The record gives the reactivity of an RNA of 177 nucleotides to DMS. Values cover nucleotides 27 to 126. The reactions ran in a buffer of 150 mM KOAc, 10 mM MgCl2 and 150 mM bicine (pH 8.5), at 24 C. It was measured as part of the RMDB library OK2TRN.
[RMDB]
RNA sequence: GGGAACGACUCGAGUAGAGUCGAAAAUUGCAGUUAAACUCAAGGGGGAUUUCCAAUCACAGUAUGGGGGAAACCUCAGUAUAGUGCGAGACCAGGUUGCUAUUACGGGUCCAUUGGAUGUAAACGCAUUCUAGCGCCUAUUCGUAGGCGCUAGAAUAAAAGAAACAACAACAACAAC
Reactivity to DMS in 0.01 (KOAc 150mM, MgCl2 10mM, bicine 150mM(pH8.5), 24C), signal-to-noise 2, nucleotides 027 to 126: u010u010g020c080a070g010u010u000a070a090a130c030u000c050a060a120g010g010g010g000g020a200u000u000u000c000c020a030a060u010c020a080c070a250g000u000a200u000g010g000g010g010g000a110a090a180c010c020u010c010a020g020u020a040u000a080g020u000g010c190g010a120g020a000c020c000a060g010g010u000u000g030c110u010a070u010u000a050c120g000g010g000u000c010c030a050u000u000g010g010a020u000g010u010a040a110a090c150g020c160